Notes
Conditions: 150 mM KOAc, 10 mM MgCl2 and 150 mM bicine (pH 8.5), 24 C. Chemical mapping of a 177-nucleotide RNA with DMS and 2A3. The 2A3 profile rests on 3,136 reads. For DMS, 4,013 sequencing reads were counted. 2A3 adducts were read by reverse transcription with SuperScript II with manganese. The data come from the RNA Mapping Database (RMDB), library M2PK50. Values cover nucleotides 27 to 126. DMS adducts were read by reverse transcription with MarathonRT.
RNA sequence: GGGAACGACUCGAGUAGAGUCGAAAAUCAUGUUUAUUCGUAAACAUGAAACGCCGCACGGCGCGCCUGGCCACCAGGGAACCUGGAUAUGGAAGCCUGAGAAUGAGGUGCCGUUCGCGGCACCUAAUCUAGACAAACAAUUCGUUGUUUGUCUAGAAAAAGAAACAACAACAACAAC
Reactivity to DMS in 0.01 (KOAc 150mM, MgCl2 10mM, bicine 150mM(pH8.5), 24C), signal-to-noise 4, nucleotides 027 to 126: u000c010a000u000g000u000u000u000a020u000u010c180g030u000a010a010a010c000a000u000g000a020a190a200c120g020c030c030g020c140a090c100g010g010c010g020c100g000c010c010u000g010g030c040c050a130c050c020a010g010g010g010a070a180c040c010u000g000g020a130u000a080u000g000g000a090a150g000c020c010u000g010a100g010a110a110u010g000a040g010g010u000g010c000c010g030u000u000c190g020c010g010g000c000a010c010c000u000a030a050
Reactivity to 2A3 in 0.01 (KOAc 150mM, MgCl2 10mM, bicine 150mM(pH8.5), 24C), signal-to-noise 3, nucleotides 027 to 126: u020c000a010u010g000u000u010u010a040u040u070c170g060u060a000a000a030c000a000u000g010a050a000a030c060g030c000c030g040c050a050c100g010g000c000g050c030g070c020c020u020g040g000c010c000a040c010c010a040g000g030g080a020a010c010c010u000g050g070a070u060a070u200g070g060a080a020g050c020c010u080g040a100g110a150a140u220g020a020g080g000u020g000c030c020g000u050u060c160g000c020g020g000c000a010c000c000u020a020a030